[RMDB]
The data come from the RNA Mapping Database (RMDB), library M2RFPK. This 207-nucleotide RNA was probed chemically with DMS and 2A3. DMS (dimethyl sulfate) methylates the pairing face of unpaired adenines and cytosines. For 2A3 the reverse transcriptase was SuperScript II with manganese. The 2A3 profile rests on 1,945 reads.
RNA sequence: GGGAACGACUCGAGUAGAGUCGAAAAUGCAAGUAGUGCUAUUGUUGGAAUCACCGUACCUAUUUAGAUUUACGCUCCAAGAUCGGUGGAUAGCAGCCCUAUCAAUAUCUAGGAGAACUGUGCUAUGAAAACGGUAUUGGCUUCGGCCAAUACCGAACCUACUGCAUUGCUUCGGCAAUGCAGUAGGAAAAGAAACAACAACAACAAC
Reactivity to DMS in 0.01 (KOAc 150mM, MgCl2 10mM, bicine 150mM(pH8.5), 24C), signal-to-noise 1, nucleotides 027 to 156: u010g040c060a100a140g090u020a070g010u000g010c000u010a090u000u010g030u000u000g010g000a220a130u040c020a060c020c010g010u000a090c000c040u010a130u000u000u000a100g000a100u010u010u000a090c090g040c100u000c020c020a060a020g030a080u000c070g050g040u000g010g030a060u000a030g000c030a210g010c220c110c010u000a090u000c020a060a090u000a100u000c040u010a130g000g030a070g020a010a050c030u010g040u020g000c070u020a080u030g000a070a020a030a140c000g010g010u000a030u000u000g030g020c010u000u010c270g010g000c010c010a010a010u010a020c000c000g030a010a030
Reactivity to 2A3 in 0.01 (KOAc 150mM, MgCl2 10mM, bicine 150mM(pH8.5), 24C), signal-to-noise 3, nucleotides 027 to 156: u150g010c050a090a070g020u060a010g060u110g100c030u030a040u050u060g120u130u080g040g000a040a020u070c020a020c050c020g010u080a060c000c010u040a130u130u090u010a030g010a070u070u030u210a060c060g000c020u000c010c020a030a020g000a050u060c040g040g010u030g030g020a000u030a020g010c070a020g010c030c000c000u030a020u040c030a080a080u050a020u300c030u010a000g000g000a030g030a020a010c040u060g040u100g090c010u040a020u110g100a040a050a000a060c010g000g000u000a000u000u000g000g000c000u020u030c140g080g000c000c010a000a000u000a000c000c000g000a000a000